[RMDB]
RNA sequence: GGGAACGACUCGAGUAGAGUCGAAAAGGUCUAACUCAAUAAUUGCCAUCAUGAAAAUUCUGGGUGACUUUUGUGACUAAAGUCCCAUUGUAAGCCACAUUCUUUGUCCAGCAGUGCUCACUGACUGUUCCUAGUGUACGUUCGCGUACACUAGGAAAAAAGAAACAACAACAACAAC
Reactivity to 2A3 in 0.01 (KOAc 150mM, MgCl2 10mM, bicine 150mM(pH8.5), 24C), signal-to-noise 2, nucleotides 027 to 126: g050g000u050c030u070a100a000c030u010c040a040a150u150a170a040u080u120g050c080c040a060u050c030a020u130g180a150a140a060a020u120u000c050u050g000g030g000u020g020a000c000u060u030u070u050g060u070g070a010c020u030a030a060a010g030u030c000c000c000a000u000u110g070u050a100a000g000c020c000a000c020a020u070u030c030u000u000u120g050u000c030c000a020g000c010a040g010u020g050c060u100c080a020c030u030g120a110c010u030g040
Reactivity to DMS in 0.01 (KOAc 150mM, MgCl2 10mM, bicine 150mM(pH8.5), 24C), signal-to-noise 3, nucleotides 027 to 126: g000g020u010c000u000a060a070c030u020c010a030a090u010a070a020u010u020g010c160c060a100u040c100a070u020g000a110a100a050a040u020u010c080u000g010g020g020u010g000a020c020u000u000u000u000g020u020g000a100c070u010a040a100a110g000u010c010c010c010a060u000u010g000u010a040a050g000c000c030a040c060a060u020u000c060u000u000u010g010u020c100c030a080g010c040a020g020u000g030c060u010c030a080c030u010g000a060c090u010g020